[RMDB]
RNA sequence: GGGAACGACUCGAGUAGAGUCGAAAAAGGGAGAGAUGCUAGGAGUUAGAGGAGACCGAAGCGAGGAGGAAAGCAAAGAAAGCAACGGGGCUAGCCGUCAGGUGUUCCACCCCCCGAGAGGGUACGAAAGGCCUGGCGUUCGCGCCAGGCAAAAGAAACAACAACAACAAC
Reactivity to DMS in 0.01 (KOAc 150mM, MgCl2 10mM, bicine 150mM(pH8.5), 24C), signal-to-noise 2, nucleotides 027 to 129: a080g000g000g050a120g030a100g040a130u010g040c040u000a100g060g000a050g000u010u040a250g030a040g000g050a170g010a030c000c040g020a210a040g010c090g040a020g000g000a000g020g020a060a010a000g050c110a000a060a130g000a040a090a100g000c080a160a010c180g050g000g070g010c160u110a110g070c000c000g020u050c130a110g000g000u000g000u000u000c030c040a130c050c050c090c000c030c050g000a000g000a080g070g020g000u030a090c060g000a000a060a000g000
Reactivity to 2A3 in 0.01 (KOAc 150mM, MgCl2 10mM, bicine 150mM(pH8.5), 24C), signal-to-noise 1, nucleotides 027 to 129: a000g060g000g000a000g000a000g000a000u180g090c000u030a000g020g010a050g000u050u040a030g000a000g000g000a000g010a010c000c000g080a020a000g030c000g110a000g060g000a000g000g030a080a000a000g010c090a000a000a010g060a030a000a000g040c040a000a010c050g080g040g000g010c000u110a080g030c010c000g030u010c040a050g000g070u040g010u050u080c000c020a050c000c000c000c000c000c000g000a040g010a040g060g000g010u020a170c060g030a000a050a050g050
The record gives the reactivity of an RNA of 170 nucleotides to DMS and 2A3. The data come from the RNA Mapping Database (RMDB), library 15KLIB. DMS adducts were read by reverse transcription with MarathonRT. Conditions: 150 mM KOAc, 10 mM MgCl2 and 150 mM bicine (pH 8.5), 24 C. The 2A3 profile rests on 1,516 reads. Reactivities are rounded to 0.1 and cut off at 0 and 3. Reactivities are given for positions 27 through 129.